[RMDB]
RNA sequence: GGGAACGACUCGAGUAGAGUCGAAAAAGAGUGGCCUGCUACGGCAGGCCACUCACUAAAAGGAACGAUCGUUGUGAUAUGCGUUAAUUCACCGUUACAUAUCACAGUGAUUUUCCUUUAUAGCGAAGCUAGCUAUAGAAUUCGUUCUAUAGCUAGCAAAAGAAACAACAACAACAAC
Reactivity to 2A3 in 0.01 (KOAc 150mM, MgCl2 10mM, bicine 150mM(pH8.5), 24C), signal-to-noise 9, nucleotides 027 to 126: a000g010a000g000u010g010g000c050c000u010g020c020u060a120c300g090g000c010a000g000g010c010c000a000c010u010c000a000c000u000a000a000a000a000g020g000a020a050c110g020a030u000c000g020u010u010g000u000g010a000u000a000u020g080c130g080u110u170a090a070u290u210c110a080c130c050g030u050u110a030c000a010u000a000u000c000a000c010a000g010u010g000a000u000u010u000u000c000c000u000u000u010a300u050a020g050c080g030a100a000
Reactivity to DMS in 0.01 (KOAc 150mM, MgCl2 10mM, bicine 150mM(pH8.5), 24C), signal-to-noise 7, nucleotides 027 to 126: a060g010a010g060u000g010g010c010c000u020g030c000u000a100c200g030g010c010a020g010g020c010c000a000c010u000c000a010c020u000a020a030a020a010g000g010a020a010c290g010a000u000c000g010u000u000g000u000g000a000u000a000u000g000c160g020u010u010a050a080u010u010c220a110c260c170g010u010u020a110c010a000u000a000u000c000a000c000a000g000u000g010a010u000u010u000u000c010c000u000u000u000a060u010a040g000c130g010a170a130
Chemical mapping of a 177-nucleotide RNA with 2A3 and DMS. DMS adducts were read by reverse transcription with MarathonRT. 2A3 adducts were read by reverse transcription with SuperScript II with manganese. Conditions: 150 mM KOAc, 10 mM MgCl2 and 150 mM bicine (pH 8.5), 24 C.